[RMDB]
RNA sequence: GGGAACGACUCGAGUAGAGUCGAAAAUUGGCUAUGGGAAGACGCAUUUUCGAACAGAAAGCUAAAAGGGAUUUCGAGCGCCGACGCUAUCGCCCAUAAAGUCUCGAUACUCGGAUUCCCCUUGCCGAGGCCGAGUGCUAUUCGUAGCACUCGGCCUAAAAGAAACAACAACAACAAC
Reactivity to 2A3 in 0.01 (KOAc 150mM, MgCl2 10mM, bicine 150mM(pH8.5), 24C), signal-to-noise 1, nucleotides 027 to 126: u050u040g000g000c000u040a070u030g110g030g000a090a080g000a000c040g030c020a120u030u050u000u040c010g000a040a050c030a110g160a100a070a010g020c030u140a040a050a040a040g010g000g000a030u030u050u110c120g060a000g010c000g060c030c030g000a040c050g010c010u040a060u140c070g050c000c000c000a000u160a010a220a000g100u020c050u000c030g040a030u010a060c000u020c000g060g000a000u000u000c050c000c010c000u000u100g040c060c020g000